[RMDB]
RNA sequence: GGGAACGACUCGAGUAGAGUCGAAAAGAAAGAAACACCUGCACCCCGCAGCCCGAAUUAUGUGGGAGCUGCGCCGUUUCCGUAAUCCGUAGCACCACAUGAUUCGGCUUCGUGGUACAGGAUAUAAAGGAUUAAAAUGGUUCGCCAUUUUAAUCCUAAAAGAAACAACAACAACAAC
Reactivity to 2A3 in 0.01 (KOAc 150mM, MgCl2 10mM, bicine 150mM(pH8.5), 24C), signal-to-noise 5, nucleotides 027 to 126: g030a000a090a000g090a030a110a010c040a030c030c010u010g000c000a010c000c000c000c010g000c020a000g030c030c100c030g010a000a010u020u010a010u020g010u010g000g000g110a180g020c000u010g000c000g040c040c060g070u030u100u050c070c060g090u220a060a090u070c030c000g010u010a010g000c010a000c000c000a000c000a010u020g000a010u010u000c010g000g000c000u010u010c010g010u000g010g000u000a010c000a000g020g010a000u010a000u000a010a100
Reactivity to DMS in 0.01 (KOAc 150mM, MgCl2 10mM, bicine 150mM(pH8.5), 24C), signal-to-noise 3, nucleotides 027 to 126: g010a110a090a070g000a160a050a100c090a290c000c010u000g000c050a030c010c000c030c010g010c070a010g010c120c030c030g030a020a010u000u000a000u000g030u000g000g000g000a140g020c010u000g000c000g000c280c090g020u010u000u020c110c090g010u020a140a040u000c180c020g010u000a030g010c000a130c000c000a000c000a000u000g010a020u000u000c020g010g000c000u000u000c010g000u020g000g000u000a030c000a010g020g020a060u010a030u040a050a130